[RMDB]
RNA sequence: GGGAACGACUCGAGUAGAGUCGAAAAUGACGUUAAACUGCUGACUCAUACAUACUGACACCGGUUGCUCAACAGGCUGUGUGGGACAAUAGAAUAACAAGGCUGUCAAUUCGAGCUUGACGGCUGCAAAACCUGCAGUACUUCGGUACUGCAGGAAGACGUUAUACGUCUUCGGACGUAUAACGUCAAAAGAAACAACAACAACAAC
Reactivity to DMS in 0.01 (KOAc 150mM, MgCl2 10mM, bicine 150mM(pH8.5), 24C), signal-to-noise 1, nucleotides 027 to 156: u010g010a050c110g060u000u010a010a010a220c060u000g050c030u000g000a160c030u030c040a110u000a030c040a120u000a080c030u000g010a080c100a050c050c010g020g020u010u000g010c020u000c030a050a110c020a070g000g010c030u000g020u030g060u000g000g040g030a110c010a010a000u000a070g010a070a080u000a020a040c040a060a170g050g010c000u000g020u010c040a010a070u000u000c110g030a150g000c260u000u000g000a060c020g010g070c000u000g050c080a000a050a030a110c010c010u000g020c020a000g020u000a000c000u000u020c250g010g080u020a000c010u000g000c000a000g000g000a010a010
Reactivity to 2A3 in 0.01 (KOAc 150mM, MgCl2 10mM, bicine 150mM(pH8.5), 24C), signal-to-noise 4, nucleotides 027 to 156: u110g070a010c070g010u030u040a040a060a030c030u030g010c030u030g030a040c010u010c030a020u020a020c000a020u090a030c040u080g090a060c040a070c110c100g150g040u170u140g030c040u040c090a040a080c010a080g050g000c020u000g000u000g000u010g050g010g020a000c000a020a020u040a050g060a060a040u050a020a020c040a060a060g040g000c000u000g010u010c000a000a010u120u150c050g050a020g050c010u000u000g000a000c000g010g000c000u010g000c020a010a040a030a160c000c000u000g000c000a000g000u000a000c010u030u040c100g070g000u000a000c000u010g000c010a000g010g000a000a010